[RMDB]
RNA sequence: GGGAACGACUCGAGUAGAGUCGAAAAGUCCAUCGCCCCCUCGCCGGUGGCGCCGGCGCCGACGAUGGUGUGCAGCUCGUCGAUGAACGUGAUGAUUUGGCCGGCCGAGUUCUUGAUGUCGUCGAGGGUUGACUCCUCUAUUCGUAGAGGAGUCAACAAAAGAAACAACAACAACAAC
Reactivity to DMS in 0.01 (KOAc 150mM, MgCl2 10mM, bicine 150mM(pH8.5), 24C), signal-to-noise 1, nucleotides 027 to 126: g010u030c010c000a000u010c020g000c040c000c000c000c000u030c000g010c090c000g000g010u010g000g050c060g000c020c050g000g010c010g020c140c040g000a010c000g000a030u010g000g020u050g030u000g020c040a080g010c020u030c040g000u000c020g020a170u030g000a150a030c040g030u040g020a210u010g010a180u040u030u010g020g010c010c000g000g010c000c060g000a160g000u010u030c080u020u030g000a060u010g000u000c060g000u040c020g000a040g000g000
Reactivity to 2A3 in 0.01 (KOAc 150mM, MgCl2 10mM, bicine 150mM(pH8.5), 24C), signal-to-noise 2, nucleotides 027 to 126: g020u000c010c000a020u020c020g000c000c010c010c000c000u010c000g000c010c000g010g000u020g060g020c010g000c000c000g020g000c020g000c030c030g000a030c000g020a000u090g050g190u100g050u090g140c080a070g000c010u000c010g020u000c000g070a070u190g050a090a040c110g070u100g070a150u070g010a070u140u070u280g060g000c020c000g000g000c030c050g100a030g030u090u000c000u050u170g130a120u260g000u100c090g010u020c000g020a020g000g040
The record gives the reactivity of an RNA of 177 nucleotides to DMS and 2A3. DMS adducts were read by reverse transcription with MarathonRT. Reactivities are given for positions 27 through 126. Conditions: 150 mM KOAc, 10 mM MgCl2 and 150 mM bicine (pH 8.5), 24 C.